[RMDB]
RNA sequence: GGGAACGACUCGAGUAGAGUCGAAAACAACCCAACCCCACGAUCCUCCAUCGGCAUGAUCAUGAUGUGUUCUCAAAUAUCAGGCCAGUAAAUCACCAUGCUCGUGCUGGUAAAGGCUGGAGGGCUUAUGUAAGUUUUAAUUCGUUAAAACUUACAUAAAAGAAACAACAACAACAAC
Reactivity to DMS in 0.01 (KOAc 150mM, MgCl2 10mM, bicine 150mM(pH8.5), 24C), signal-to-noise 9, nucleotides 027 to 126: c200a120a180c010c000c020a140a300c020c000c010c020a110c190g000a100u010c010c010u000c020c040a030u010c010g000g000c010a020u000g000a020u000c040a040u000g000a050u000g010u010g010u000u000c020u000c030a080a070a080u020a060u010c100a060g020g000c030c040a080g010u010a040a050a100u010c020a010c020c000a020u000g010c070u000c040g010u010g000c000u000g010g010u010a060a070a080g010g020c090u000g010g000a040g010g010g010c100u010u000
Reactivity to 2A3 in 0.01 (KOAc 150mM, MgCl2 10mM, bicine 150mM(pH8.5), 24C), signal-to-noise 9, nucleotides 027 to 126: c040a020a100c000c000c010a020a040c010c010c000c010a050c050g040a120u040c000c000u000c010c010a030u040c010g000g000c000a010u010g010a020u010c000a010u020g040a080u100g050u010g030u130u030c070u020c060a120a160a050u250a130u140c060a040g080g090c060c010a020g030u100a010a100a030u060c000a000c010c000a000u010g000c000u010c010g020u020g000c000u010g000g010u040a100a090a020g120g010c030u020g010g010a030g010g010g000c010u010u000
The record gives the reactivity of an RNA of 177 nucleotides to DMS and 2A3. Source: RMDB libraries RFM100 and RFMREP, as collected in RNAgym. The RNA was probed in 150 mM KOAc, 10 mM MgCl2 and 150 mM bicine (pH 8.5) at 24 C. For 2A3 the reverse transcriptase was SuperScript II with manganese. DMS adducts were read by reverse transcription with MarathonRT.